RNA sequence: GGGAACGACUCGAGUAGAGUCGAAAAGACUGAUGUAGAGUUCGGUUGGAGCGACAAGUAUUUAGCUUGAGAUAGCUAAAUCACCUCGGUAUGAUUAGGGUGAGACCUAGGAACCGUAGGGGUAUGCAAUGCUGUAUUGCGUUCGCGCAAUACAGAACAAACUAUUAGGAUUCGUCCUAAUAGUUUGAAAAGAAACAACAACAACAAC
Reactivity to DMS in 0.01 (KOAc 150mM, MgCl2 10mM, bicine 150mM(pH8.5), 24C), signal-to-noise 6, nucleotides 027 to 156: g010a080c030u000g010a050u000g010u000a090g000a130g010u000u000c030g010g000u000u000g010g000a110g020c040g000a070c040a050a080g030u000a040u000u000u000a020g020c000u000u000g010a260g000a110u000a030g000c000u000a000a010a030u000c030a040c010c020u000c010g020g010u000a080u000g010a210u000u000a050g000g020g000u000g020a300g000a140c010c010u000a050g010g010a120a080c030c030g010u000a060g010g010g010g020u000a080u000g010c070a050a090u010g000c000u000g000u000a010u000u000g010c000g020u000u000c300g030c030g030c000a020a020u000a000c000a010g000a050a180
Reactivity to 2A3 in 0.01 (KOAc 150mM, MgCl2 10mM, bicine 150mM(pH8.5), 24C), signal-to-noise 9, nucleotides 027 to 156: g050a010c070u060g040a050u110g050u110a040g020a040g080u070u090c060g020g010u010u040g040g030a060g020c050g090a090c040a080a010g040u080a060u000u000u000a000g000c000u010u020g020a020g010a070u120a020g000c000u000a000a000a010u020c010a010c000c000u020c020g000g010u300a220u190g030a040u030u030a020g010g030g010u060g090a080g040a050c000c010u010a010g020g010a020a010c010c000g010u040a040g010g010g000g000u030a040u120g050c060a040a100u140g040c000u000g000u000a000u000u000g000c000g010u020u040c180g000c000g000c130a000a000u000a000c000a000g010a010a010